[RMDB]
Conditions: 150 mM KOAc, 10 mM MgCl2 and 150 mM bicine (pH 8.5), 24 C. Chemical mapping of a 207-nucleotide RNA with 2A3. The data come from the RNA Mapping Database (RMDB), library M2RFPK. Reactivities are given for positions 27 through 156.
RNA sequence: GGGAACGACUCGAGUAGAGUCGAAAAGGGAAUGGUGGUUUACCCCGUUAUCAAAUGAUUACCGACCAAUAAUUGGCGAAACUCGAUUCGCGUUGGCUGCCUAAUUCAAGGAAUUAGCGUGCCUUCAAAGACAUCAAGAAGUUCGCUUCUUGAUGAAGUCCAAAUCAACGUUCGCGUUGAUUUGGACAAAAGAAACAACAACAACAAC
Reactivity to 2A3 in 0.01 (KOAc 150mM, MgCl2 10mM, bicine 150mM(pH8.5), 24C), signal-to-noise 2, nucleotides 027 to 156: g090g000g020a150a190u170g020g030u040g020g000u020u080u280a170c030c000c000c020g110u060u050a100u100c030a050a110a110u230g010a030u050u010a040c030c000g090a080c010c060a000a080u070a180a040u050u040g000g000c000g010a010a020a010c020u010c050g060a050u030u030c020g000c000g010u000u030g040g000c040u060g040c010c030u010a010a000u020u030c060a150a120g240g000a070a030u000u000a000g010c030g100u060g000c010c000u000u030c060a090a130a030g100a030c000a000u000c020a020a000g010a000a000g040u020u040c100g000c160u000u000c000u010u020g000a030u000g000a050a010